[RMDB]
RNA sequence: GGGAACGACUCGAGUAGAGUCGAAAAGAAGGCUUAGAAAAGUUGUAGGACUUGUCUGAAUCCUUGUAAAUUUGUCAUUGAAAAAAAAUGAGGGCUCACUGUCCACUGCAGCCACUGCUCUGCAUCAUACUAGUGAUGGUUUCGACCAUCACUAGUAAAAAGAAACAACAACAACAAC
Reactivity to DMS in 0.01 (KOAc 150mM, MgCl2 10mM, bicine 150mM(pH8.5), 24C), signal-to-noise 3, nucleotides 027 to 126: g010a120a070g010g020c160u000u010a060g000a090a070a050a080g010u000u020g000u000a130g010g010a040c010u010u010g020u000c080u010g010a040a080u000c000c020u000u000g010u000a050a090a180u000u010u000g000u010c090a130u010u000g000a010a000a020a040a080a120a100a100u020g000a030g000g000g010c060u000c050a050c060u000g000u000c020c030a100c130u020g010c050a020g010c050c030a060c090u010g010c010u000c030u000g010c050a030u000c120a090
Reactivity to 2A3 in 0.01 (KOAc 150mM, MgCl2 10mM, bicine 150mM(pH8.5), 24C), signal-to-noise 2, nucleotides 027 to 126: g050a020a070g030g030c050u100u090a030g090a090a100a010a030g050u160u080g040u120a070g080g000a010c020u080u100g070u110c090u050g030a020a020u000c000c000u050u040g060u040a160a240a160u110u020u070g120u060c060a080u070u200g160a230a100a010a010a000a010a010a070u020g030a050g000g000g000c000u020c050a040c050u010g000u000c000c000a030c100u040g000c000a000g000c010c060a200c080u080g010c010u020c020u030g050c010a030u050c000a010